[RMDB]
RNA sequence: GGGAACGACUCGAGUAGAGUCGAAAAAGCUCCUGUUUCGACAGGAGCUGUGUGGCUGCCCUUUUGUGCUCGAUGUAGAGUGCUUUCCUGCCGGAAAGGGCUUGAGAGCUUGAUUCGUCAAGCUCAACAUACCCUGUUAUUUCGAUAACAGGGUAUGAAAAGAAACAACAACAACAAC
Reactivity to 2A3 in 0.01 (KOAc 150mM, MgCl2 10mM, bicine 150mM(pH8.5), 24C), signal-to-noise 8, nucleotides 027 to 126: a000g000c000u010c000c000u010g020u020u070u080c210g080a010c000a010g000g000a000g000c000u000g010u010g000u030g040g010c070u070g010c020c000c000u000u010u020u040g090u030g000c000u010c010g100a140u280g080u220a090g010a010g020u040g020c000u040u040u020c010c010u040g050c020c010g000g020a030a010a010g000g000g000c000u040u120g110a070g000a000g000c010u000u000g020a020u040u050c120g050u010c100a000a000g000c000u000c000a000a000
Reactivity to DMS in 0.01 (KOAc 150mM, MgCl2 10mM, bicine 150mM(pH8.5), 24C), signal-to-noise 9, nucleotides 027 to 126: a010g010c000u000c000c000u000g000u000u000u010c170g010a030c000a010g000g000a010g010c000u000g000u010g020u010g010g010c040u000g000c010c000c010u000u000u000u010g020u010g010c010u000c010g010a200u010g020u010a130g000a030g010u000g010c060u000u000u000c010c010u000g010c050c030g010g000a020a020a020g010g010g010c010u000u010g010a160g010a010g010c000u000u000g000a030u000u010c200g010u000c000a010a010g010c000u000c010a070a150
The record gives the reactivity of an RNA of 177 nucleotides to 2A3 and DMS.